Source: RMDB library 15KLIB, as collected in RNAgym.
Chemical mapping of a 170-nucleotide RNA with 2A3 and DMS.
The reactions ran in a buffer of 150 mM KOAc, 10 mM MgCl2 and 150 mM bicine (pH 8.5), at 24 C.
DMS (dimethyl sulfate) methylates the pairing face of unpaired adenines and cytosines.

[RMDB]
RNA sequence: GGGAACGACUCGAGUAGAGUCGAAAAUCCUUCUUCGGUGAUCCUGCCUCUCCUUGUCGGUGAAUCCUCCCCUGAGGGGCCUCUUUCCAGGUCCGGAGUCUACUUCCAUCUGGACCACCCGGGCCUUUAACACUGUGGUUCGCCACAGUGAAAAGAAACAACAACAACAAC
Reactivity to 2A3 in 0.01 (KOAc 150mM, MgCl2 10mM, bicine 150mM(pH8.5), 24C), signal-to-noise 9, nucleotides 027 to 129: u010c000c000u060u080c030u080u080c040g050g040u070g050a070u030c010c010u040g040c020c000u030c010u020c000c020u030u080g100u120c070g040g030u050g070a050a070u070c010c010u030c010c030c000c010u010g040a060g000g010g000g000c000c010u030c000u010u050u020c030c020a010g000g000u000c000c000g020g000a020g000u000c010u040a100c050u220u070c070c030a170u070c080u100g020g000a010c000c010a080c010c010c000g010g000g000c010c000u010u030u010a030a010
Reactivity to DMS in 0.01 (KOAc 150mM, MgCl2 10mM, bicine 150mM(pH8.5), 24C), signal-to-noise 9, nucleotides 027 to 129: u000c010c010u000u010c070u030u020c100g000g000u000g000a100u030c030c020u000g000c060c020u000c040u000c030c040u010u000g030u020c050g000g040u000g020a130a120u040c050c000u000c010c010c000c060u000g020a090g000g000g000g000c040c020u030c040u000u010u010c050c070a040g000g000u000c030c000g020g010a070g000u020c050u000a050c150u050u060c130c050a140u060c160u020g020g020a040c050c040a080c130c040c030g000g000g000c060c020u000u010u020a020a080